[RMDB]
RNA sequence: GGGAACGACUCGAGUAGAGUCGAAAAUCGAAGUUAAAUCACAUCAUGGGGUUUUUAGAGUGCCAAACCUGAUGGCCAUAAGCGUCUUACCGUUGAAGGGGAGAGAUAUGAUCAUAAUUAAGAUGCCCGAUAUUCAGUACUUCGGUACUGAAUAUCGAAAAGAAACAACAACAACAAC
Reactivity to 2A3 in 0.01 (KOAc 150mM, MgCl2 10mM, bicine 150mM(pH8.5), 24C), signal-to-noise 8, nucleotides 027 to 126: u030c020g040a070a010g030u060u100a080a080a050u060c030a030c000a030u040c020a090u170g050g000g000g000u070u040u030u060u130a190g050a080g060u190g050c030c020a070a050a050c030c030u040g040a060u050g020g010c010c010a080u080a130a030g040c020g060u010c010u030u060a080c030c010g070u070u140g110a130a060g040g010g020g010a080g000a000g000a020u030a060u130g020a010u040c050a070u050a190a010u100u040a090a010g040a040u050g070c010c000
Reactivity to DMS in 0.01 (KOAc 150mM, MgCl2 10mM, bicine 150mM(pH8.5), 24C), signal-to-noise 4, nucleotides 027 to 126: u010c020g020a180a070g000u010u010a040a150a070u010c040a030c050a030u020c030a120u020g010g010g000g000u020u000u020u030u010a080g020a100g010u040g000c040c040a040a050a120c050c040u010g000a080u020g000g010c040c030a080u020a070a110g030c040g000u010c020u000u020a080c050c040g000u020u010g020a070a070g000g000g000g010a070g010a080g000a050u000a070u000g010a040u000c100a060u020a040a030u000u000a060a200g010a010u010g000c020c050